This 207-nucleotide RNA was probed chemically with DMS and 2A3. For DMS the reverse transcriptase was MarathonRT. For 2A3, 1,443 sequencing reads were counted.

[RMDB]
RNA sequence: GGGAACGACUCGAGUAGAGUCGAAAACUGUCAUAGGUCAUCGUGUUUUUUGGUAUAGUUCAUUCAUCUUCUGUUGCCUCAACAUCUGGCCAUAAAAGCGAAUAAUGAAUGGUUUUUUGAAUUUGAAAUUUGCAUGUGAAUUUUUGGAUGAGAGACAGCAGAUAUGAAAAUUCGUUUUCAUAUCUGCAAAAGAAACAACAACAACAAC
Reactivity to DMS in 0.01 (KOAc 150mM, MgCl2 10mM, bicine 150mM(pH8.5), 24C), signal-to-noise 1, nucleotides 027 to 156: c030u000g000u000c070a140u010a120g040g000u000c030a050u010c040g010u010g030u000u000u000u000u000u000g030g020u010a070u000a120g010u000u000c020a070u000u010c060a100u010c050u000u000c050u000g020u000u000g030c000c010u010c070a060a080c110a050u000c020u000g000g040c000c020a120u000a040a070a100a090g000c090g040a080a050u010a050a100u020g020a020a090u010g000g030u000u000u000u000u000u000g010a100a050u000u000u000g000a100a080a090u000u000u010g020c080a100u010g020u010g030a050a110u000u010u010u010u020g010g010a060u010g010a200g000a150g020a040c050a160
Reactivity to 2A3 in 0.01 (KOAc 150mM, MgCl2 10mM, bicine 150mM(pH8.5), 24C), signal-to-noise 3, nucleotides 027 to 156: c010u010g050u100c040a090u130a090g070g030u030c030a050u070c090g020u030g020u060u050u000u040u090u110g060g000u090a110u050a140g030u020u060c010a040u060u000c020a070u020c030u110u010c020u080g060u060u090g020c040c000u050c040a040a060c000a050u030c030u060g000g000c000c010a030u110a050a150a020a010g040c050g040a090a060u150a140a040u110g030a020a020u020g040g020u000u000u010u050u100u080g040a060a040u050u070u080g050a090a100a050u120u150u110g040c010a020u080g020u020g070a090a070u060u040u040u130u110g030g010a000u060g040a040g020a010g130a030c020a030